Chemical mapping of a 207-nucleotide RNA with 2A3.

[RMDB]
RNA sequence: GGGAACGACUCGAGUAGAGUCGAAAAUCAAAGAAACUGUUUCAAUCAGAUUGCAUCCUUUUCAAAGAAGUCACUGCUGAAGCAAUGAAGAGAUAUUACUCAACACCGUACGAGGGAGUUCCAGAGAUGAUUGUGCUAUUGAUAAACUUCUUGUGCAGCAGAUGGUAAGGUUCGCCUUACCAUCUGCAAAAGAAACAACAACAACAAC
Reactivity to 2A3 in 0.01 (KOAc 150mM, MgCl2 10mM, bicine 150mM(pH8.5), 24C), signal-to-noise 2, nucleotides 027 to 156: u040c010a000a050a010g080a040a090a050c040u050g030u030u180u130c020a010a070u040c000a060g100a230u080u090g010c020a040u020c010c000u050u060u090u170c110a100a120a080g030a030a000g020u050c000a010c080u020g000c040u090g080a010a020g060c050a010a120u120g020a050a070g050a010g040a020u040a060u160u090a120c000u010c060a020a020c010a020c020c050g130u250a060c100g010a120g030g000g030a070g030u060u050c060c030a000g030a030g000a070u160g040a070u030u180g040u020g050c010u060a070u150u090g020a000u090a050a120a020c040u030u010c010u010u170g040u090g040c030a030
The RNA was probed in 150 mM KOAc, 10 mM MgCl2 and 150 mM bicine (pH 8.5) at 24 C.